RNA sequence: GGGAACGACUCGAGUAGAGUCGAAAACACCCACCUGGGGGACACCAGAGAGGGGUUCCCUAGUGAGAGAGGAGGUUCCUCAGACCCCCGCCCCCCUGCAGGAGGGAGCACCAGCUCCGUAGAGGAGGUCUAGAACUUAGUUCGCUAAGUUCUAGACAAAAGAAACAACAACAACAAC
Reactivity to 2A3 in 0.01 (KOAc 150mM, MgCl2 10mM, bicine 150mM(pH8.5), 24C), signal-to-noise 1, nucleotides 027 to 126: c050a050c030c010c000a020c010c010u010g020g000g010g000g000a020c010a040c090c030a020g090a030g080a140g300g010g000g010u010u000c000c000c000u010a020g020u180g080a120g000a040g010a000g030g030a040g070g200u120u080c020c030u050c030a030g120a220c010c000c010c010c000g050c000c000c020c000c000c000u010g000c030a050g030g020a000g000g000g000a000g000c000a030c040c020a020g040c000u000c020c010g000u010a000g000a040g030g010a010g010
Reactivity to DMS in 0.01 (KOAc 150mM, MgCl2 10mM, bicine 150mM(pH8.5), 24C), signal-to-noise 5, nucleotides 027 to 126: c170a170c000c000c010a220c150c010u000g020g030g000g010g000a030c020a040c010c020a230g000a160g000a150g030g020g010g020u000u000c000c000c010u000a020g000u000g000a130g000a150g020a060g010g010a100g010g000u010u000c010c010u000c030a150g010a300c020c000c000c000c020g000c020c000c000c010c000c030u000g020c080a070g000g000a090g010g010g000a030g010c070a090c110c100a150g020c010u010c010c010g000u010a100g010a160g010g000a070g010